[RMDB]
RNA sequence: GGGAACGACUCGAGUAGAGUCGAAAAUCGCUCCUUCGGGAGCGAAAAAAACCUUUGUGGACGACGCUCUGAUGACCAUAUGCUAGAACCCAUUGGGUUCUUGGACCAUAUGCAAGGAGCGCGUCCACUCUGGUAAAAAGUCUGCUUCGGCAGACAAGCGUUUAUAUGGAUUCGUCCAUAUAAACGCAAAAGAAACAACAACAACAAC
Reactivity to DMS in 0.01 (KOAc 150mM, MgCl2 10mM, bicine 150mM(pH8.5), 24C), signal-to-noise 1, nucleotides 027 to 156: u010c010g100c040u000c000c000u000u010c300g030g030g000a010g000c000g010a000a000a010a040a030a020a040c010c000u000u000u010g020u000g010g000a090c000g020a130c000g020c010u050c010u050g000a170u010g010a120c300c000a000u000a000u000g060c060u000a040g050a020a000c010c010c020a300u000u000g070g060g020u000u000c000u000u000g000g000a140c200c060a000u000a010u000g030c020a180a170g020g010a000g030c000g020c000g010u000c000c000a000c010u000c010u010g000g000u000a030a050a040a110a130g000u000c010u020g000c000u030u010c300g040g000c000a010g000a000c010a050a070
Reactivity to 2A3 in 0.01 (KOAc 150mM, MgCl2 10mM, bicine 150mM(pH8.5), 24C), signal-to-noise 4, nucleotides 027 to 156: u010c000g000c000u010c000c010u020u080c180g050g010g010a000g000c000g000a000a000a010a000a000a000a000c010c010u020u000u000g010u000g000g000a010c020g050a130c010g020c000u030c000u050g190a300u140g030a080c050c000a020u000a000u000g020c020u020a000g000a000a000c000c020c090a300u150u300g010g000g020u000u020c000u010u040g030g030a020c070c000a020u000a000u010g000c010a110a190g000g000a000g000c010g000c000g000u010c000c000a000c010u000c000u000g000g000u080a020a100a020a040a030g010u010c000u010g010c000u040u110c290g110g000c000a000g000a000c010a000a010

The record gives the reactivity of an RNA of 207 nucleotides to DMS and 2A3. The data come from the RNA Mapping Database (RMDB), library RNAMAK.